[RMDB]
RNA sequence: GGGAACGACUCGAGUAGAGUCGAAAAUGCCAGUGCACUCAGACACAGUUCCCCACGGAUGCCUGAGGAGCUGUCAGGUAGAAAGAUGGCAGGGUUUACUCUGUAACUAAGUCUGCUUGCUGCUGCAAAUUUAGCAGGGUUUCGACCCUGCUAAAUUAAAAGAAACAACAACAACAAC
Reactivity to DMS in 0.01 (KOAc 150mM, MgCl2 10mM, bicine 150mM(pH8.5), 24C), signal-to-noise 4, nucleotides 027 to 126: u010g010c060c030a060g020u000g020c040a180c030u000c040a030g000a080c050a050c080a100g010u000u000c010c010c000c040a180c180g020g010a140u000g010c010c020u000g010a050g010g010a110g020c030u010g000u010c000a040g010g010u000a040g000a050a100a080g010a190u010g000g000c020a020g000g010g000u000u000u000a070c010u000c010u000g000u010a190a100c070u010a120a130g030u000c010u000g010c040u000u000g010c020u000g010c040u010g020c060a050
Reactivity to 2A3 in 0.01 (KOAc 150mM, MgCl2 10mM, bicine 150mM(pH8.5), 24C), signal-to-noise 1, nucleotides 027 to 126: u100g010c040c020a040g070u040g050c070a030c080u040c020a010g070a010c000a010c000a050g000u030u030c040c000c000c010a030c100g090g000a100u090g050c020c000u030g000a020g010g000a050g020c030u080g060u130c010a010g030g000u020a040g060a020a070a000g050a030u110g020g000c000a000g000g010g010u030u070u040a120c000u020c000u040g010u050a070a060c020u040a080a080g050u040c010u000g010c000u000u010g020c000u000g000c000u010g070c010a010

The data come from the RNA Mapping Database (RMDB), library OK2TST. This 177-nucleotide RNA was probed chemically with DMS and 2A3. The RNA was probed in 150 mM KOAc, 10 mM MgCl2 and 150 mM bicine (pH 8.5) at 24 C. The 2A3 profile rests on 1,408 reads.